[RMDB]
The data come from the RNA Mapping Database (RMDB), library TTRDEL.
This 177-nucleotide RNA was probed chemically with DMS and 2A3.
RNA sequence: GGGAACGACUCGAGUAGAGUCGAAAAGAUAUGGACCAUGAAGAGACUAUAGCAGCGACGAAGUCGGAAACGACAGAGCUGAGUAAAUUCUCCAUGGUCCUAAGUCAAAUCGGGGUUCGCCCCGAAAGGUUAAUUAUUACUUCGGUAAUAAUUAACCAAAAGAAACAACAACAACAAC
Reactivity to DMS in 0.01 (KOAc 150mM, MgCl2 10mM, bicine 150mM(pH8.5), 24C), signal-to-noise 5, nucleotides 027 to 126: g010a030u000a300u000g000g000a010c000c000a010u000g010a060a030g000a030g010a090c170u010a130u010a140g000c020a010g000c010g020a190c270g000a120a120g010u000c000g000g010a050a040a130c010g000a030c000a030g010a200g010c000u000g000a050g010u000a040a120a100u010u000c000u000c000c000a020u000g000g000u000c010c000u000a000a030g000u000c030a060a100a120u000c010g020g000g010g020u000u020c290g010c010c000c000c000g010a000a030a070
Reactivity to 2A3 in 0.01 (KOAc 150mM, MgCl2 10mM, bicine 150mM(pH8.5), 24C), signal-to-noise 5, nucleotides 027 to 126: g010a000u020a030u060g000g000a000c000c000a010u010g040a210a140g030a010g030a030c090u100a110u250a300g040c000a000g030c010g170a220c090g150a300a040g000u010c010g000g000a020a030a000c010g000a000c010a020g050a010g000c000u010g030a010g010u100a030a200a160u090u000c010u000c000c010a010u010g010g010u010c000c000u000a000a000g000u000c000a010a020a170u050c010g000g000g020g030u060u060c190g130c000c000c030c020g000a050a030a000